The record gives the reactivity of an RNA of 207 nucleotides to 2A3 and DMS. DMS adducts were read by reverse transcription with MarathonRT. The RNA was probed in 150 mM KOAc, 10 mM MgCl2 and 150 mM bicine (pH 8.5) at 24 C. For DMS, 2,435 sequencing reads were counted. 2A3 adducts were read by reverse transcription with SuperScript II with manganese.

[RMDB]
RNA sequence: GGGAACGACUCGAGUAGAGUCGAAAAGGCUAGGUGGCAUUCCGGUGUGGGAUACUUGGUAAUAUGUAACGCUAAUUGCAUAAGAUUGUAGGACGGAAUUUACAGUCUUGGUUUUUAUAAACCUGAAAAAAGGAAUUACACUUCGGUGUAAUUCCAACCGUUUUAUUAGGUUCGCCUAAUAAAACGGAAAAGAAACAACAACAACAAC
Reactivity to 2A3 in 0.01 (KOAc 150mM, MgCl2 10mM, bicine 150mM(pH8.5), 24C), signal-to-noise 4, nucleotides 027 to 156: g050g000c040u030a010g000g040u010g030g030c010a030u120u050c050c030g050g000u060g010u020g020g040g000a040u030a100c030u040u090g020g020u060a040a070u130a120u160g070u060a070a020c040g010c080u050a090a060u100u090g020c010a040u020a110a040g000a040u020u050g020u030a020g010g080a030c080g010g030a020a020u070u050u080a040c010a020g010u000c000u040u030g010g010u010u050u000u020u040a120u140a080a050a020c000c000u040g100a040a000a000a000a030a040g000g000a000a000u000u000a000c000a000c000u020u060c180g050g000u010g000u000a000a000u000u000c000c000a010a000
Reactivity to DMS in 0.01 (KOAc 150mM, MgCl2 10mM, bicine 150mM(pH8.5), 24C), signal-to-noise 1, nucleotides 027 to 156: g000g010c010u000a040g070g040u000g000g030c000a170u000u010c050c000g050g000u020g030u010g000g010g020a050u000a020c070u000u000g000g010u010a040a080u000a040u000g010u020a100a050c100g030c100u000a060a110u010u000g010c010a080u010a080a020g020a050u000u020g010u010a030g030g010a180c070g000g020a090a300u000u000u000a030c010a060g000u000c000u010u000g010g000u000u000u000u030u000a100u010a070a030a040c030c010u000g010a000a050a060a150a090a170g020g030a010a020u000u000a020c000a010c000u000u010c300g040g030u000g000u000a010a000u000u000c000c000a000a010